[RMDB]
Source: RMDB library OK2TST, as collected in RNAgym. Chemical mapping of a 177-nucleotide RNA with 2A3 and DMS. For 2A3, 2,490 sequencing reads were counted.
RNA sequence: GGGAACGACUCGAGUAGAGUCGAAAAUACAUUUAAUGGAGACUGUUCUCAUGAAAAUGAAAUGUUUUGCGAAAAAUGCGCUGGCGGUUACCACACUAAUGAUCGCUGCUUGUGGUAUGGCAAACGACAGGUGAAAAUAGUUCGCUAUUUUCACCUGAAAAGAAACAACAACAACAAC
Reactivity to 2A3 in 0.01 (KOAc 150mM, MgCl2 10mM, bicine 150mM(pH8.5), 24C), signal-to-noise 3, nucleotides 027 to 126: u060a000c000a020u040u100u130a110a050u200g080g000a050g040a040c150u140g100u230u000c030u000c020a000u070g050a030a090a000a020u060g040a080a090a000u040g030u040u070u040u050g000c010g090a170a040a040a030a060u060g010c070g000c020u030g010g020c020g000g010u030u030a050c020c010a040c020a030c140u150a160a140u140g040a030u030c020g000c060u040g010c020u030u030g010u020g060g020u040a020u070g050g000c000a040a000a040c020g030a030
Reactivity to DMS in 0.01 (KOAc 150mM, MgCl2 10mM, bicine 150mM(pH8.5), 24C), signal-to-noise 4, nucleotides 027 to 126: u010a130c030a020u000u010u000a130a100u010g010g000a070g010a080c230u010g020u000u000c020u000c010a040u000g000a110a080a050a030u010g010a050a120a090u010g000u000u000u010u000g000c020g000a030a060a100a130a080u020g030c070g000c040u000g000g020c010g010g010u010u000a030c060c020a050c120a100c170u000a050a110u000g000a050u000c060g010c070u000g020c060u010u010g020u000g010g010u000a040u010g000g000c050a020a020a040c070g000a180